[RMDB]
RNA sequence: GGGAACGACUCGAGUAGAGUCGAAAAGAUAUGGACGGAUGACCCAGCCGCCCAGCAACAGCACAAGUAGGCUCGGAAACGAGCCUACUUGUGACAUGCUGUAACAAGCUGCAUCCGUCCUAAGUCAUCUUGUGUACAACUUCGGUUGUACACAAGAAAAAGAAACAACAACAACAAC
Reactivity to DMS in 0.01 (KOAc 150mM, MgCl2 10mM, bicine 150mM(pH8.5), 24C), signal-to-noise 2, nucleotides 027 to 126: g020a020u000a300u000g010g020a010c020g010g010a000u000g010a300c300c230c150a000g040c020c050g020c300c180c020a040g000c010a040a080c290a080g000c000a020c010a010a010g000u020a010g010g000c000u000c000g000g000a080a130a120c000g010a000g040c000c010u020a000c000u000u000g010u000g020a040c020a100u000g000c020u010g010u010a070a090c200a130a080g010c010u000g000c020a040u000c000c000g000u000c000c000u000a010a040g020u000c070a140
The record gives the reactivity of an RNA of 177 nucleotides to DMS.
For DMS the reverse transcriptase was MarathonRT.
The reactions ran in a buffer of 150 mM KOAc, 10 mM MgCl2 and 150 mM bicine (pH 8.5), at 24 C.